[RMDB]
RNA sequence: GGGAACGACUCGAGUAGAGUCGAAAACCGGGACGCCUUGCAUGUUGGGGACGAAGCCGCCCCCGGGCGCUCCCCUCGAUCCACCUUCGAGGGGGUUCACACCCCCAGUCGGCGGGCCGGCUACUCUGUGCACAGGGCUUCGGCCCUGUGAAAAGAAACAACAACAACAAC
Reactivity to DMS in 0.01 (KOAc 150mM, MgCl2 10mM, bicine 150mM(pH8.5), 24C), signal-to-noise 3, nucleotides 027 to 129: c020c020g010g020g020a030c050g020c020c030u050u030g020c210a150u060g000u000u060g030g050g010g080a050c110g010a060a070g010c100c040g040c050c000c030c000c090g000g000g000c030g020c160u100c000c000c010c000u020c010g030a030u030c100c170a100c140c110u060u000c050g000a000g050g020g020g020g030u080u040c130a100c300a140c000c000c000c000c000a090g000u010c130g020g020c060g020g020g080c000c020g020g040c030u000a030c080u020c050u000g050u070g020
Reactivity to 2A3 in 0.01 (KOAc 150mM, MgCl2 10mM, bicine 150mM(pH8.5), 24C), signal-to-noise 4, nucleotides 027 to 129: c000c000g000g010g030a030c030g000c020c000u070u120g090c030a070u260g070u160u140g120g000g010g000a040c030g080a060a010g020c050c020g020c000c010c010c000c060g030g000g000c000g030c020u060c000c000c000c000u010c000g000a010u010c000c020a060c050c110u010u000c000g010a030g040g020g000g000g010u150u110c040a050c000a010c060c030c000c000c000a010g040u030c030g030g000c000g000g030g050c020c000g000g010c000u050a070c030u050c020u060g120u150g030
This 170-nucleotide RNA was probed chemically with DMS and 2A3. The 2A3 profile rests on 6,207 reads.